[RMDB]
Annotation
This 177-nucleotide RNA was probed chemically with DMS and 2A3. DMS adducts were read by reverse transcription with MarathonRT. Reactivities are given for positions 27 through 126. For 2A3, 1,979 sequencing reads were counted. The RNA was probed in 150 mM KOAc, 10 mM MgCl2 and 150 mM bicine (pH 8.5) at 24 C. It was measured as part of the RMDB library OK2TRN. The DMS profile rests on 2,019 reads.
RNA sequence: GGGAACGACUCGAGUAGAGUCGAAAAUCUCCCUUGGGCACUUGGACACCUCUGCUAGAACAUUUAGUAGACGCUGACAAUUCCAAGCUAAUGUAAAAGCCAAGUCUGGAGGGUCAUGGGGUGGGAGCUCGUGUAAGCUAUUCGUAGCUUACACGAGAAAAGAAACAACAACAACAAC
Reactivity to DMS in 0.01 (KOAc 150mM, MgCl2 10mM, bicine 150mM(pH8.5), 24C), signal-to-noise 3, nucleotides 027 to 126: u010c100u010c030c030c010u010u010g010g010g000c100a130c070u000u000g000g030a050c080a060c050c070u000c010u000g010c020u000a030g010a210a150c150a100u000u000u000a010g020u000a040g040a030c150g010c190u000g000a140c140a090a120u010u000c000c010a040a060g010c090u000a080a070u010g000u010a050a090a110a140g010c040c040a040a060g000u000c130u010g000g010a130g010g000g010u000c120a090u000g000g000g010g010u000g010g010g000a130g000
Reactivity to 2A3 in 0.01 (KOAc 150mM, MgCl2 10mM, bicine 150mM(pH8.5), 24C), signal-to-noise 3, nucleotides 027 to 126: u000c010u020c020c010c000u040u050g010g010g000c060a020c030u010u010g020g030a010c000a010c030c000u020c010u020g000c000u010a010g030a280a100c090a300u100u150u050a000g010u000a020g010a030c080g000c120u060g000a050c110a080a130u140u000c020c020a000a020g020c000u120a120a030u160g060u210a110a150a020a060g010c000c030a040a000g090u000c110u090g000g030a030g020g010g000u050c130a230u070g030g000g030g030u260g030g000g000a030g020